[RMDB]
RNA sequence: GGGAACGACUCGAGUAGAGUCGAAAAGAUAUGGAUAGCAUCGCUUGGAUUUACAGCACUAUUCGGAAACGAACGAAUGCUGUUGUCAGCGAGGCUAUCCUAAGUCAAACCUCAGUUCGCUGAGGAAGACGGGAUUGAGGUUCGCCUCAAUCCCGUCAAAAGAAACAACAACAACAAC
Reactivity to DMS in 0.01 (KOAc 150mM, MgCl2 10mM, bicine 150mM(pH8.5), 24C), signal-to-noise 1, nucleotides 027 to 126: g040a040u000a300u010g020g010a030u000a000g000c040a010u000c000g000c020u020u020g020g020a030u000u020u000a000c040a010g000c000a020c160u020a280u000u000c000g010g080a180a050a300c000g000a020a010c110g010a060a100u000g010c040u010g000u000u000g010u000c040a060g020c000g030a000g000g020c110u000a000u000c010c000u000a010a060g000u000c060a100a090a150c000c000u000c010a000g010u000u060c140g080c000u000g000a030g000g000a050a120
Reactivity to 2A3 in 0.01 (KOAc 150mM, MgCl2 10mM, bicine 150mM(pH8.5), 24C), signal-to-noise 2, nucleotides 027 to 126: g040a040u120a040u090g000g010a000u030a000g020c000a020u000c020g040c090u170u160g190g010a100u290u270u180a010c010a010g030c030a010c100u120a080u020u040c030g000g050a120a100a000c020g070a010a000c000g070a300a270u030g000c010u040g000u040u010g010u020c000a000g010c000g000a000g020g000c020u000a000u040c000c000u000a010a000g000u000c030a080a120a160c020c000u000c000a020g010u030u140c290g010c100u010g000a010g010g010a010a030